This 207-nucleotide RNA was probed chemically with 2A3. For 2A3 the reverse transcriptase was SuperScript II with manganese.

[RMDB]
RNA sequence: GGGAACGACUCGAGUAGAGUCGAAAACGGCAAAAAAGCAAACUUGACCACCAAGGAUAAAAGAGAGCUUAUCCAAGGAUGCAAAAGAUAAUCUCACUUUUGACACCCACUGAUCUCGAACUUAAAGAAAACCGAGACUACUUCGGUAGUCUCGGAACUUAGAAGAGCUCUUCGGAGCUCUUCUAAGAAAAGAAACAACAACAACAAC
Reactivity to 2A3 in 0.01 (KOAc 150mM, MgCl2 10mM, bicine 150mM(pH8.5), 24C), signal-to-noise 1, nucleotides 027 to 156: c030g070g010c070a000a070a090a070a040a050g020c040a070a080a100c020u110u030g000a150c010c000a020c030c010a010a040g030g000a020u020a100a090a060a030g160a000g000a010g030c020u050u060a000u010c010c010a030a050g050g000a030u080g000c020a010a010a010a010g030a050u140a170a240u080c070u050c060a020c010u000u020u060u020g040a030c010a110c000c020c000a070c080u060g050a130u090c000u040c080g090a130a090c030u110u100a210a060a060g110a030a060a080a040c010c000g000a020g000a000c000u000a000c010u010u020c110g040g010u000a000g040u000c000u020c000g010g000a000a010
Values cover nucleotides 27 to 156. The reactions ran in a buffer of 150 mM KOAc, 10 mM MgCl2 and 150 mM bicine (pH 8.5), at 24 C.